This 177-nucleotide RNA was probed chemically with 2A3 and DMS. DMS adducts were read by reverse transcription with MarathonRT. The reactions ran in a buffer of 150 mM KOAc, 10 mM MgCl2 and 150 mM bicine (pH 8.5), at 24 C. Reactivities are given for positions 27 through 126. Source: RMDB libraries RFM100 and RFMREP, as collected in RNAgym. For 2A3 the reverse transcriptase was SuperScript II with manganese.
[RMDB]
RNA sequence: GGGAACGACUCGAGUAGAGUCGAAAAAGCGUAGCCGUUACGACGGCUACGCAGCGGAUCCCUACAACGCUGCGCAUAUGCAUGAACACAAUGAAAAUGUAAAUGCCAGUCGUUGCAGGAGUUCGAAACCUUGAAAAGGAUUCGUCCUUUUCAAGGUAAAAGAAACAACAACAACAAC
Reactivity to 2A3 in 0.01 (KOAc 150mM, MgCl2 10mM, bicine 150mM(pH8.5), 24C), signal-to-noise 9, nucleotides 027 to 126: a000g000c000g000u000a000g000c000c000g000u010u050a100c300g020a000c000g090g000c000u000a000c000g000c000a000g010c000g020g010a060u070c010c000c000u000a000c000a000a000c000g000c000u020g000c030g000c100a010u070a060u090g010c010a000u030g070a160a030c090a020c100a230a230u290g090a110a140a030a000u010g010u020a100a120a000u000g000c000c010a080g050u180c040g000u010u000g000c000a000g000g030a050g000u000u000c010g020a160a050
Reactivity to DMS in 0.01 (KOAc 150mM, MgCl2 10mM, bicine 150mM(pH8.5), 24C), signal-to-noise 8, nucleotides 027 to 126: a080g010c000g030u000a000g020c010c000g010u000u010a110c200g030a050c000g020g010c000u000a000c000g020c000a010g010c020g000g000a010u010c030c000c000u000a060c010a010a000c010g010c000u010g000c190g000c010a010u000a090u000g000c000a000u000g010a160a160c130a190c300a150a100u020g010a080a070a130a020u000g010u000a040a070a020u000g000c000c010a010g000u020c020g020u000u000g000c050a010g000g000a060g000u000u000c000g000a110a120